RNA sequence: GGGAACGACUCGAGUAGAGUCGAAAAGAUAUGGACUAUACGCCAAUGGAGGCAACAGCUUUGCGUAACAUCGCUCGGAAACGAGCGUGGCAAAGACAUGCCUCCAAAAAUGUAUAGUCCUAAGUCACAUGUAUGUGGUGUUCGCACCACAUACAUGAAAAGAAACAACAACAACAAC
Reactivity to DMS in 0.01 (KOAc 150mM, MgCl2 10mM, bicine 150mM(pH8.5), 24C), signal-to-noise 5, nucleotides 027 to 126: g020a050u000a300u000g000g010a020c000u000a000u000a010c010g030c100c070a090a300u010g010g020a020g000g010c000a020a100c300a190g000c010u000u000u000g010c000g010u000a050a140c200a020u020c030g010c000u000c000g010g000a140a080a220c010g000a010g030c000g050u010g000g000c000a000a020a000g010a040c120a190u000g010c000c000u000c010c000a000a000a030a100a060u000g000u000a000u000a000g000u000c000c000u000a010a100g000u000c050a290
Reactivity to 2A3 in 0.01 (KOAc 150mM, MgCl2 10mM, bicine 150mM(pH8.5), 24C), signal-to-noise 3, nucleotides 027 to 126: g040a020u060a070u190g000g010a010c010u000a010u010a000c000g000c000c000a030a090u020g000g000a010g000g000c020a070a030c100a200g080c020u000u010u000g010c020g110u100a050a080c060a300u300c040g000c010u010c010g020g030a090a070a050c000g000a010g020c010g010u000g010g000c010a010a000a000g000a000c000a030u070g000c000c010u000c000c000a000a000a000a000a000u000g010u010a000u000a000g000u010c000c000u000a000a010g020u010c010a020